Structure probing data (DMS and 2A3) for a 177-nucleotide construct.
RNA sequence: GGGAACGACUCGAGUAGAGUCGAAAACAACCAUGUCCUACCUGAUGGCCAUUGGCGUACAGUUUAUUUCGGAUACCCAGGUAAGUGCCCUCCGGACGCGAGUGCCUAAGGCACUCCCAAGGCAAUACAUAGACGCAUGUUUCGACAUGCGUCUAUGAAAAGAAACAACAACAACAAC
Reactivity to DMS in 0.01 (KOAc 150mM, MgCl2 10mM, bicine 150mM(pH8.5), 24C), signal-to-noise 3, nucleotides 027 to 126: c150a080a180c040c070a090u020g010u000c030c030u020a160c090c040u030g020a070u010g020g000c010c050a110u020u030g000g000c060g000u010a060c100a060g000u010u010u020a080u030u000u000c080g010g010a090u020a090c040c020c010a050g000g020u010a020a080g000u010g020c000c000c040u000c040c030g010g000a100c210g000c180g000a050g020u010g000c010c010u020a170a120g040g000c000a030c010u000c020c030c040a110a120g000g000c150a030a080u030a180
Reactivity to 2A3 in 0.01 (KOAc 150mM, MgCl2 10mM, bicine 150mM(pH8.5), 24C), signal-to-noise 8, nucleotides 027 to 126: c050a030a040c020c010a060u120g070u040c010c020u060a100c010c020u100g060a120u110g080g040c040c040a100u060u100g070g000c050g030u090a050c040a060g020u020u060u150a160u030u090u090c040g030g030a040u060a120c000c000c030a010g040g000u040a110a010g050u030g090c000c000c000u030c010c010g030g010a040c050g020c040g030a010g020u030g010c000c020u100a100a170g030g000c000a000c010u010c010c010c000a070a050g030g000c030a060a020u090a120

Description: The RNA was probed in 150 mM KOAc, 10 mM MgCl2 and 150 mM bicine (pH 8.5) at 24 C. DMS adducts were read by reverse transcription with MarathonRT. For 2A3, 9,848 sequencing reads were counted. Reactivities are rounded to 0.1 and cut off at 0 and 3.